[RMDB]
RNA sequence: GGGAACGACUCGAGUAGAGUCGAAAAGUUAAAUAUAACUGCAAAAAAUAAUACUUCUUACGCUUUAGCUGCCUAAAAACCAGCGGGCGUGACCCGAUUCGGAUUGCUUGUGUCUGAUGACAGGUCUUAUUAUUAGCAAGCUACGGUAGAAUCUUGUCAUAGUGCAAAAGUUCGCUUUUGCACUAUGAAAAGAAACAACAACAACAAC
Reactivity to 2A3 in 0.01 (KOAc 150mM, MgCl2 10mM, bicine 150mM(pH8.5), 24C), signal-to-noise 1, nucleotides 027 to 156: g000u000u050a040a180a110u180a080u110a160a140c030u080g030c080a050a130a040a040a040a130u170a080a150u090a240c080u110u180c010u110u090a010c020g010c000u070u050u120a040g000c000u000g000c000c030u060a170a070a000a000a000c010c010a000g000c000g000g020g000c000g010u020g000a010c030c010c030g010a000u020u020c000g030g000a000u090u000g010c010u000u010g010u000g000u000c000u010g020a010u020g010a020c020a030g000g010u010c020u000u090a120u050u050a050u030u210a030g000c000a010a000g000c020u070a020c110g070g000u030a030g060a260a060u040c000u000u000g010u060

The record gives the reactivity of an RNA of 207 nucleotides to 2A3. For 2A3, 644 sequencing reads were counted. Source: RMDB library ARCHII, as collected in RNAgym.